Chemical mapping of a 177-nucleotide RNA with 2A3 and DMS. The 2A3 profile rests on 14,770 reads. Source: RMDB library OK2TST, as collected in RNAgym. 2A3 adducts were read by reverse transcription with SuperScript II with manganese.

RNA sequence: GGGAACGACUCGAGUAGAGUCGAAAAACUCACUGUAGCACUUCAAAAAUGUAAUGCAAUACUUGAAACACUUUGAUUUUUCAGGCACAAUGCUCCUGAGAGCAAUAAAUCACGUAUUUUAGUCAAACCAUACCACUAAUUUCGAUUAGUGGUAUGGAAAAGAAACAACAACAACAAC
Reactivity to 2A3 in 0.01 (KOAc 150mM, MgCl2 10mM, bicine 150mM(pH8.5), 24C), signal-to-noise 9, nucleotides 027 to 126: a000c020u020c020a050c050u080g050u080a030g030c020a030c060u060u070c080a070a080a060a060a110u120g030u160a080a060u100g040c020a020a030u020a050c000u020u040g030a130a180a010c050a020c070u070u040u040g050a120u110u090u040u050u040c010a000g000g000c050a020c050a180a260u150g010c050u020c040c010u050g030a040g010a000g060c010a020a060u060a090a060a020u050c020a020c060g030u030a060u040u090u060u130a070g050u050c030a000a030a030
Reactivity to DMS in 0.01 (KOAc 150mM, MgCl2 10mM, bicine 150mM(pH8.5), 24C), signal-to-noise 7, nucleotides 027 to 126: a080c040u000c020a110c110u010g010u000a080g010c030a040c050u000u010c090a040a080a100a140a080u000g010u000a070a060u000g000c080a060a040u000a020c020u000u010g010a030a060a080c120a070c220u000u000u000g000a040u000u000u000u000u000c010a020g000g010c140a050c160a080a110u000g010c160u010c010c030u010g000a030g000a020g010c040a040a030u000a050a070a060u000c020a020c180g000u000a020u000u000u000u010a100g010u000c100a050a080a170